The record gives the reactivity of an RNA of 177 nucleotides to 2A3 and DMS. 2A3 is a SHAPE reagent: it acylates the 2'-hydroxyl of flexible nucleotides of all four kinds. It was measured as part of the RMDB library OK1LIB.
RNA sequence: GGGAACGACUCGAGUAGAGUCGAAAAUCGAUGACCGCCAGUCGGGGCUACUGUGGUCAUCACAGGUGCUCCCUUUAGAUCACUGCUAUUGGCCCAGACGAGGGGCACUAGUAUCAGAACUAGCCAAAUUUUAGGUAGUGUUCGCACUACCUAAAAUAAAAGAAACAACAACAACAAC
Reactivity to 2A3 in 0.01 (KOAc 150mM, MgCl2 10mM, bicine 150mM(pH8.5), 24C), signal-to-noise 7, nucleotides 027 to 126: u130c030g010a000u010g020a020c000c010g060c100c050a010g000u030c060g070g000g100g000c020u020a010c010u020g000u020g010g010u030c010a010u030c010a010c020a020g050g000u020g010c010u200c000c010c000u020u050u060a100g000a080u090c020a040c090u060g040c020u080a110u160u160g080g020c000c010c020a020g040a030c090g040a090g000g000g000g000c010a010c020u020a010g040u030a040u170c090a050g060a110a060c050u020a020g010c010c010a070a110
Reactivity to DMS in 0.01 (KOAc 150mM, MgCl2 10mM, bicine 150mM(pH8.5), 24C), signal-to-noise 5, nucleotides 027 to 126: u020c080g000a030u000g000a040c010c000g010c170c040a080g010u010c130g010g000g000g010c040u000a090c010u000g000u010g010g010u000c010a000u030c010a100c190a120g010g020u020g010c040u030c020c000c020u020u010u020a050g010a070u010c090a150c090u000g000c060u010a110u010u010g010g000c020c050c030a100g010a090c150g020a060g000g000g000g000c020a040c030u010a040g010u000a060u020c180a150g000a130a060c070u000a030g000c010c040a060a100